Overview
Source: RMDB library RFM100, as collected in RNAgym. Chemical mapping of a 177-nucleotide RNA with 2A3. Conditions: 150 mM KOAc, 10 mM MgCl2 and 150 mM bicine (pH 8.5), 24 C. 2A3 adducts were read by reverse transcription with SuperScript II with manganese.

[RMDB]
RNA sequence: GGGAACGACUCGAGUAGAGUCGAAAACCCCUCCACGCCUGCGGGAUUCUGAUGGGAAUGACAACGGUCGGUCCAUUUGACUUUAUCAUUACGAUGGUUCUAGUCGUGUUAUGGUAAAGGUCUGUUGCUCCUCGGUCGAAUUCGUUCGACCGAGGAGAAAAGAAACAACAACAACAAC
Reactivity to 2A3 in 0.01 (KOAc 150mM, MgCl2 10mM, bicine 150mM(pH8.5), 24C), signal-to-noise 2, nucleotides 027 to 126: c020c000c000c000u000c000c010a040c060g040c000c040u040g000c080g010g020g000a060u170u000c020u100g100a130u080g040g040g080a030a130u050g030a040c090a140a040c040g070g000u020c030g000g000u020c000c010a050u140u010u080g000a000c000u050u000u000a000u020c000a000u000u040a000c000g050a020u040g060g100u130u140c090u200a020g020u000c030g000u040g060u090u200a010u010g000g000u000a000a010a090g030g000u050c030u020g060u050u030g000